Chemical mapping of a 177-nucleotide RNA with DMS and 2A3. DMS adducts were read by reverse transcription with MarathonRT. Source: RMDB library RFMREP, as collected in RNAgym. The DMS profile rests on 7,166 reads. 2A3 adducts were read by reverse transcription with SuperScript II with manganese.

RNA sequence: GGGAACGACUCGAGUAGAGUCGAAAAGAAAAACUCAGCACUGCGGAGUGAUUGGAUGGGUCCUAUCUUUUGAGAGAUCAGCUGUUCGUUGCCUUCUCCCGAGCAAAGAAACAUGCAAGCGCUGCGGCAUGUUUAAGUGCUUCGGCACUUAAACAUGAAAAGAAACAACAACAACAAC
Reactivity to DMS in 0.01 (KOAc 150mM, MgCl2 10mM, bicine 150mM(pH8.5), 24C), signal-to-noise 6, nucleotides 027 to 126: g010a080a090a080a130a070c040u000c030a070g010c050a060c090u000g020c060g010g010a080g010u000g000a110u020u000g010g010a070u000g010g000g010u000c030c030u000a080u000c020u000u000u000u010g010a100g000a090g010a070u000c090a070g010c030u000g000u000u000c080g010u010u000g020c040c030u000u010c090u000c010c010c030g010a100g010c070a030a070a080g000a070a040a070c070a040u000g020c050a090a110g000c050g010c050u000g010c060g000g000
Reactivity to 2A3 in 0.01 (KOAc 150mM, MgCl2 10mM, bicine 150mM(pH8.5), 24C), signal-to-noise 4, nucleotides 027 to 126: g030a000a100a010a020a000c030u040c040a030g020c020a020c050u110g000c040g060g050a050g040u110g030a090u040u120g060g020a020u020g030g020g010u000c000c000u040a080u040c030u030u120u110u120g110a100g010a010g020a050u060c040a020g010c010u070g060u110u050c050g050u060u060g030c000c000u060u060c030u020c020c000c010g050a010g020c020a000a130a060g050a030a120a010c030a020u120g010c030a030a040g060c030g000c070u050g000c010g050g000